[RMDB]
RNA sequence: GGGAACGACUCGAGUAGAGUCGAAAAACACGGCGCUCUAUCUCGAUCGCGAGGGCAAGGUGCAGACGGCACAUUUCCGCAUGCCGGAGGCGAAGAAGCCGAAGAAGGGCGAGCAGCCGGCGGGCGAACUAGUAAUACCUUUCGAGGUAUUACUAGUAAAAGAAACAACAACAACAAC
Reactivity to DMS in 0.01 (KOAc 150mM, MgCl2 10mM, bicine 150mM(pH8.5), 24C), signal-to-noise 8, nucleotides 027 to 126: a090c140a100c150g000g010c040g010c020u000c020u010a050u030c020u010c020g010a070u000c050g000c090g000a110g010g010g020c060a080a050g010g000u010g000c020a070g010a100c080g000g000c030a040c070a170u010u010u000c050c010g020c050a070u010g010c010c010g010g000a050g000g000c000g010a110a100g020a150a150g010c010c010g010a070a120g030a120a140g000g000g000c020g000a080g000c020a050g010c000c000g000g000c020g010g000g000c040g000a150
Reactivity to 2A3 in 0.01 (KOAc 150mM, MgCl2 10mM, bicine 150mM(pH8.5), 24C), signal-to-noise 9, nucleotides 027 to 126: a000c100a020c030g070g000c050g020c020u010c010u040a150u110c020u020c030g080a090u050c040g010c040g050a110g020g030g020c060a060a050g050g010u040g010c010a010g060a130c050g060g010c010a020c010a080u070u090u060c030c010g000c030a020u040g000c010c000g000g000a030g010g010c040g010a090a040g070a060a020g130c020c040g020a060a020g140a050a080g100g010g000c010g010a030g000c000a000g020c000c000g000g000c000g010g010g010c020g010a020